[RMDB]
RNA sequence: GGGAACGACUCGAGUAGAGUCGAAAACCGAACGUACGCAAUCCUCUUUACCGAAUCGGACGAUCCCGACCAUUUCAUCUUCUUCGAAACGUUCCAGCGCGUCACUUAAUCCGGAGCGCACGCCGCGUUGCCGUUGUACUUUCGAGUACAACGGCAAAAAAGAAACAACAACAACAAC
Reactivity to DMS in 0.01 (KOAc 150mM, MgCl2 10mM, bicine 150mM(pH8.5), 24C), signal-to-noise 2, nucleotides 027 to 126: c000c000g060a080a090c180g020u010a050c140g010c020a060a100u000c060c000u000c060u010u040u020a020c000c030g010a060a070u010c050g010g030a060c050g020a140u000c010c020c000g000a170c070c080a050u000u000u060c000a080u000c030u000u020c070u010u000c020g010a080a050a140c060g000u000u000c000c000a060g000c030g010c090g000u000c040a050c120u040u030a120a080u010c080c040g040g010a070g000c040g030c020a070c080g020c030c000g010c120g010
Reactivity to 2A3 in 0.01 (KOAc 150mM, MgCl2 10mM, bicine 150mM(pH8.5), 24C), signal-to-noise 2, nucleotides 027 to 126: c000c000g010a110a030c040g020u170a010c020g000c050a040a070u010c010c010u080c050u080u030u090a050c000c010g140a110a020u090c050g020g030a000c010g040a010u050c000c000c000g000a040c010c050a030u000u020u090c030a040u010c010u170u000c010u000u000c030g040a070a040a010c000g030u050u000c000c000a040g040c040g000c000g080u030c030a050c070u070u090a050a010u040c010c000g040g000a010g000c030g060c010a000c010g070c040c010g020c000g070

Structure probing data (DMS and 2A3) for a 177-nucleotide construct. For 2A3, 1,278 sequencing reads were counted. The RNA was probed in 150 mM KOAc, 10 mM MgCl2 and 150 mM bicine (pH 8.5) at 24 C. For DMS the reverse transcriptase was MarathonRT.